[RMDB]
RNA sequence: GGGAACGACUCGAGUAGAGUCGAAAACAUCCGCAAAUGCUUUCAUGGUUAAUCUCCUGACUGGUUUCGAUGGGUUAACUAUACCAGGCCUCGCGGCCCUGCGUUUAGCAAUUCGUGCUUAUUUGAUGCCCUGUGCAAUUCUAUCCAUUUUGCGGAAUCGAAAAAGAUAUUUCGAUAUCUUUUUCGAAAAAGAAACAACAACAACAAC
Reactivity to DMS in 0.01 (KOAc 150mM, MgCl2 10mM, bicine 150mM(pH8.5), 24C), signal-to-noise 4, nucleotides 027 to 156: c030a090u000c000c010g030c010a040a060a060u000g000c040u010u000u000c060a110u010g010g010u010u000a070a090u010c050u010c040c030u000g000a210c030u000g020g000u000u000u010c030g010a100u000g020g020g010u000u000a050a050c030u000a080u000a070c030c040a060g010g000c010c030u000c210g020c280g000g000c070c010c010u000g010c080g010u000u000u000a100g030c030a060a210u000u000c060g010u010g020c020u000u010a090u000u010u010g010a100u000g020c010c020c020u000g020u000g020c050a050a070u000u000c070u010a080u000c030c020a100u010u010u000u000g030c010g010g020a080a200
Reactivity to 2A3 in 0.01 (KOAc 150mM, MgCl2 10mM, bicine 150mM(pH8.5), 24C), signal-to-noise 6, nucleotides 027 to 156: c010a050u010c000c000g000c010a010a020a030u060g020c040u080u120u160c090a080u150g000g020u060u100a090a050u090c060u050c090c020u050g080a080c030u080g050g060u090u140u140c030g020a050u070g030g000g000u050u080a080a050c010u020a010u020a070c000c010a010g010g010c000c010u100c070g060c100g010g000c030c040c020u040g010c050g020u040u050u090a010g000c030a050a100u110u140c090g090u100g040c030u120u130a130u140u230u160g040a040u100g030c010c010c050u070g000u040g020c020a020a060u160u000c020u070a070u070c040c010a040u050u050u030u070g020c000g020g000a010a060